An RNA of 177 nucleotides, treated with DMS and 2A3 and read out base by base. The reactions ran in a buffer of 150 mM KOAc, 10 mM MgCl2 and 150 mM bicine (pH 8.5), at 24 C. For DMS, 16,643 sequencing reads were counted. DMS adducts were read by reverse transcription with MarathonRT. For 2A3 the reverse transcriptase was SuperScript II with manganese. The data come from the RNA Mapping Database (RMDB), library OK1LIB.
[RMDB]
RNA sequence: GGGAACGACUCGAGUAGAGUCGAAAAGAGUCUACCGGCGUGGGCAGUCAAAGGAUCGAAGAUAUCGGUGAUUUAUCGAAAGUUACGCUGGAUGCAGAAGGUUUUGCUCAAGUUCAAGGAGAUUCGCAUAUGCUAUCAUGUUCGCAUGAUAGCAUAUAAAAGAAACAACAACAACAAC
Reactivity to DMS in 0.01 (KOAc 150mM, MgCl2 10mM, bicine 150mM(pH8.5), 24C), signal-to-noise 6, nucleotides 027 to 126: g020a070g010u000c010u000a100c050c030g010g010c050g020u030g000g000g000c020a040g010u020c100a070a130a130g010g000a050u000c050g010a170a120g010a060u010a040u010c030g010g030u000g010a130u020u010u020a080u020c060g010a080a070a100g020u010u020a060c060g000c030u000g000g000a060u000g000c030a030g000a140a100g000g000u000u010u030u010g010c000u000c050a200a040g020u020u010c060a040a120g000g000a120g010a020u000u010c020g010c170
Reactivity to 2A3 in 0.01 (KOAc 150mM, MgCl2 10mM, bicine 150mM(pH8.5), 24C), signal-to-noise 9, nucleotides 027 to 126: g020a000g010u010c020u070a140c040c020g020g020c020g020u090g000g010g020c010a020g050u140c090a090a100a080g110g020a040u050c050g060a090a010g050a100u100a050u110c040g000g020u050g070a280u050u090u170a080u080c050g060a060a070a010g090u090u050a040c050g000c030u030g070g010a030u060g000c010a010g010a130a040g080g020u040u090u170u070g010c000u010c020a040a050g020u110u080c050a080a010g050g010a020g010a050u030u040c010g000c020